Notes:
The data come from the RNA Mapping Database (RMDB), library OK3TST. An RNA of 207 nucleotides, treated with 2A3 and DMS and read out base by base. Reactivities are rounded to 0.1 and cut off at 0 and 3. The 2A3 profile rests on 542 reads.
RNA sequence: GGGAACGACUCGAGUAGAGUCGAAAAUGGUAGCACAACAAGAUAAUUGUUCAUUUCAAAAUAUAGCUAAAAGAGUAUAAUUGGAUUGUUUGUAAUACAAAGGAUAAAUGCUUGAGGGGAUGGAUACCCCAUUUACCCUGAUGUGAUGAUGGUGAUACAGGUGGAUUUAUUUCGAUAAAUCCACCUGAAAAGAAACAACAACAACAAC
Reactivity to 2A3 in 0.01 (KOAc 150mM, MgCl2 10mM, bicine 150mM(pH8.5), 24C), signal-to-noise 1, nucleotides 027 to 156: u170g000g020u050a020g030c020a000c030a080a070c040a050a030g030a110u080a120a120u160u050g010u050u020c000a030u000u090u170c030a020a060a190a060u160a110u080a070g020c040u180a080a000a030a050g100a070g060u060a010u030a130a070u150u020g060g010a020u030u040g020u020u050u050g100u060a010a030u060a080c010a050a080a000g040g000a000u050a050a180a010u100g030c050u130u070g010a030g000g000g000g010a000u010g020g000a000u060a080c000c000c050c000a000u000u000u030a010c000c000c000u040g060a030u050g030u020g030a030u000g000a000u040g060g000u010g050a100u070a060
Reactivity to DMS in 0.01 (KOAc 150mM, MgCl2 10mM, bicine 150mM(pH8.5), 24C), signal-to-noise 1, nucleotides 027 to 156: u000g030g070u000a020g030c050a110c030a080a110c000a060a090g080a300u000a060a120u000u000g010u010u020c010a100u000u000u000c030a090a080a060a140u000a140u000a080g010c030u030a060a060a060a160g000a090g000u010a090u000a040a130u000u000g000g000a150u000u000g010u000u000u000g010u010a120a030u000a100c040a090a130a050g010g000a030u010a000a000a070u000g020c020u020u010g010a070g120g010g000g000a050u010g040g000a170u010a140c030c030c040c300a010u010u000u000a060c000c000c000u000g060a150u010g030u000g000a110u000g030a070u000g030g000u000g020a070u000a120